[RMDB]
RNA sequence: GGGAACGACUCGAGUAGAGUCGAAAAGUCGAUUUCACAGAUCUCGCACAGGUCAACCUUUCCUCACUCAAGACCAGUGCCGUGCCGGAUCAUAUUUGGUACAUCUACACUGAUCAUCUUGCUGAACAAGCGCGACUUGCUAAGGAAGCAGCACAAGAUGAGUCAUGAGAUUCGUCUCAUGACUCAUAAAAGAAACAACAACAACAAC
Reactivity to DMS in 0.01 (KOAc 150mM, MgCl2 10mM, bicine 150mM(pH8.5), 24C), signal-to-noise 2, nucleotides 027 to 156: g010u010c020g040a110u000u000u000c020a100c020a170g030a040u000c020u000c050g020c050a110c090a120g000g000u010c030a030a200c080c000u000u020u010c020c050u010c070a160c100u000c090a060a130g020a020c020c000a050g020u140g030c000c300g030u000g020c070c000g010g000a040u010c180a080u030a300u000u010u000g040g030u000a030c020a060u000c040u020a050c010a050c040u000g000a030u000c030a120u020c050u000u000g040c130u030g000a040a130c030a040a090g000c000g020c190g000a100c020u000u000g000c040u060a110a110g030g000a060a070g010c070a060g030c030a060c050a090a150g030
Reactivity to 2A3 in 0.01 (KOAc 150mM, MgCl2 10mM, bicine 150mM(pH8.5), 24C), signal-to-noise 5, nucleotides 027 to 156: g040u050c020g030a130u020u150u160c130a130c060a110g050a070u010c030u040c060g020c020a030c010a070g010g020u050c060a090a090c020c000u050u100u040c020c040u060c030a070c020u100c040a060a040g000a030c010c010a020g020u000g060c030c030g040u020g010c020c020g050g000a020u040c080a030u080a130u100u050u070g030g000u040a010c010a050u010c060u080a030c030a020c040u040g020a060u050c010a010u010c050u080u050g020c040u000g030a100a030c030a100a000g040c040g010c030g110a080c040u060u070g020c010u070a050a020g050g010a060a020g030c030a000g030c050a040c020a070a040g120